[RMDB]
RNA sequence: GGGAACGACUCGAGUAGAGUCGAAAAGAUAUGGAGGUAUCUGUGAAGUACGAAGAACUCGGAAACGAGGGAGUACCACAGAGUACCUCCUAAGUCAAACUGAAUCAGCGUUCGCGCUGAUUCAGAAGUUAAACUGAACCUUCGGGUUCAGUUUAACAAAAGAAACAACAACAACAAC
Reactivity to 2A3 in 0.01 (KOAc 150mM, MgCl2 10mM, bicine 150mM(pH8.5), 24C), signal-to-noise 1, nucleotides 027 to 126: g000a030u080a040u170g000g000a030g000g000u000a010u000c010u010g030u030g090a300a100g000u020a000c000g140a300a070g010a090a020c010u000c010g030g030a100a030a010c020g010a000g000g010g000a010g000u000a000c000c000a000c010a000g000a010g000u020a000c000c000u000c000c000u000a000a000g000u000c040a010a000a070c010u000g000a010a010u010c010a000g000c000g020u070u160c290g010c000g000c080u000g000a000u010u000c000a000g020a000a000
Reactivity to DMS in 0.01 (KOAc 150mM, MgCl2 10mM, bicine 150mM(pH8.5), 24C), signal-to-noise 2, nucleotides 027 to 126: g000a030u000a300u000g000g010a030g000g030u000a040u000c000u010g010u000g010a130a120g030u000a000c000g020a130a100g020a100a200c010u000c000g010g000a060a090a150c000g010a010g000g000g010a020g000u000a000c010c030a010c000a000g000a060g020u000a020c000c000u000c000c000u000a000a040g000u000c020a090a110a180c020u000g000a030a000u000c000a000g050c000g000u020u000c190g020c030g030c010u000g000a000u000u000c000a010g010a060a100

About this RNA: Conditions: 150 mM KOAc, 10 mM MgCl2 and 150 mM bicine (pH 8.5), 24 C. This 177-nucleotide RNA was probed chemically with 2A3 and DMS. DMS adducts were read by reverse transcription with MarathonRT.